The record gives the reactivity of an RNA of 170 nucleotides to 2A3 and DMS.
RNA sequence: GGGAACGACUCGAGUAGAGUCGAAAAGCAAGACUUACGCUUAAAUAAGCUCCUGCAUUGGUCUGAUCAAACCAUAUGCUACAAGGAUAGUGUGUUUUAUGUUGUAAAGAAUAGUACAGCUUUUCCACGGGAACGCAGUUCGCUGCGUUCAAAAGAAACAACAACAACAAC
Reactivity to 2A3 in 0.01 (KOAc 150mM, MgCl2 10mM, bicine 150mM(pH8.5), 24C), signal-to-noise 9, nucleotides 027 to 129: g010c030a060a020g040a100c010u040u030a010c030g000c010u040u060a020a040a030u170a080a010g030c010u000c020c010u020g000c010a000u000u020g010g010u010c050u080g140a200u210c120a070a050a020c000c000a030u050a010u300g010c010u060a070c100a110a060g020g020a060u110a140g060u060g040u010g130u080u000u020u020a080u070g210u300u040g030u060a030a080a020g090a110a090u090a140g080u120a070c060a050g010c000u050u030u030u030c010c010a040c050g050g040
Reactivity to DMS in 0.01 (KOAc 150mM, MgCl2 10mM, bicine 150mM(pH8.5), 24C), signal-to-noise 7, nucleotides 027 to 129: g010c050a110a020g030a140c050u010u030a030c130g000c010u020u030a040a050a070u010a060a100g000c010u030c020c010u040g020c030a010u040u030g010g020u010c050u000g000a160u070c220a140a110a030c000c000a030u000a020u000g000c040u070a040c170a140a060g020g020a080u030a080g020u030g020u000g040u000u010u000u000a080u040g030u040u000g000u050a040a040a080g000a110a080u040a000g030u040a090c100a100g000c030u020u010u010u010c000c000a030c120g030g050